[RMDB]
RNA sequence: GGGAACGACUCGAGUAGAGUCGAAAAACAGCGAAAGGCACGAGACUUCGAACAUUAUAGCAGUUAGUAGUUGCCUAAACCCAUUGCAAUAUAUGGGACAGUAGAGGUCGCAAGCCUAUACUGUGCGAAAAGUCGCAAGGUUUCGACCUUGCGACAACAGUACAAGUAACUUCGGUUACUUGUACUGAAAAGAAACAACAACAACAAC
Reactivity to DMS in 0.01 (KOAc 150mM, MgCl2 10mM, bicine 150mM(pH8.5), 24C), signal-to-noise 3, nucleotides 027 to 156: a080c050a120g020c040g010a090a070a050g020g030c020a080c110g000a140g010a060c030u000u000c050g010a150a090c070a140u010u000a170u020a110g020c100a060g000u000u010a080g030u000a080g010u000u000g010c010c010u020a060a090a180c000c000c000a020u000u000g000c050a100a130u010a120u000a010u000g010g000g020a110c010a040g000u000a040g020a020g080g040u000c040g020c280a090a300g010c000c010u000a030u000a000c000u000g010u000g000c010g000a070a050a070a150g010u000c000g000c000a010a020g010g010u000u000u020c290g010a080c000c000u000u000g010c000g000a000c010a000a020
Reactivity to 2A3 in 0.01 (KOAc 150mM, MgCl2 10mM, bicine 150mM(pH8.5), 24C), signal-to-noise 7, nucleotides 027 to 156: a000c030a000g020c010g050a140a080a040g010g010c020a010c040g120a140g030a050c030u050u050c070g080a130a060c070a170u240u260a130u200a130g050c090a010g010u030u080a030g010u070a030g010u120u080g010c010c000u050a100a020a040c000c000c000a000u000u030g010c020a040a000u010a000u010a010u130g000g000g000a000c010a000g000u010a000g000a000g000g010u090c030g040c190a040a030g000c000c000u000a000u000a000c000u000g010u020g010c010g020a040a040a020a100g000u000c000g010c000a000a000g020g010u020u070u100c140g020a050c000c000u000u000g000c000g000a000c000a000a000